[RMDB]
RNA sequence: GGGAACGACUCGAGUAGAGUCGAAAAACUAGUAUGUACAGGGGUGAGUUGACCUGUCAUCUAGACUGCUGACCAUCAACUCACCGGUCAGCGGGAUGAUGUCCACAGAGUACGACAUCAGUACUCAGUGUAAGGACUAGUUCGCUGGUCUUUACACAAAAGAAACAACAACAACAAC
Reactivity to DMS in 0.01 (KOAc 150mM, MgCl2 10mM, bicine 150mM(pH8.5), 24C), signal-to-noise 9, nucleotides 027 to 126: a240c010u000a010g010u060a010u010g010u060a010c020a010g010g010g000g010u010g010a060g020u000u000g000a060c020c020u000g000u000c010a010u000c000u000a020g000a160c040u000g010c020u010g010a010c010c060a120u030c080a030a040c070u010c060a080c170c130g000g000u000c000a000g000c000g000g000g010a100u020g000a070u010g000u000c010c040a120c160a110g000a020g010u000a030c030g010a140c190a100u040c120a100g010u000a010c010u000c020a160
Reactivity to 2A3 in 0.01 (KOAc 150mM, MgCl2 10mM, bicine 150mM(pH8.5), 24C), signal-to-noise 9, nucleotides 027 to 126: a000c010u010a010g060u140a050u040g080u090a010c010a010g030g030g040g050u170g100a160g060u080u100g120a090c000c000u000g000u000c000a000u000c000u010a010g050a100c020u020g000c010u000g000a010c010c010a030u110c030a040a110c070u040c100a060c030c050g000g000u000c000a000g000c020g000g000g000a050u100g010a010u060g050u030c010c010a070c050a070g030a010g020u040a010c050g060a030c100a170u120c050a040g010u020a010c010u010c030a010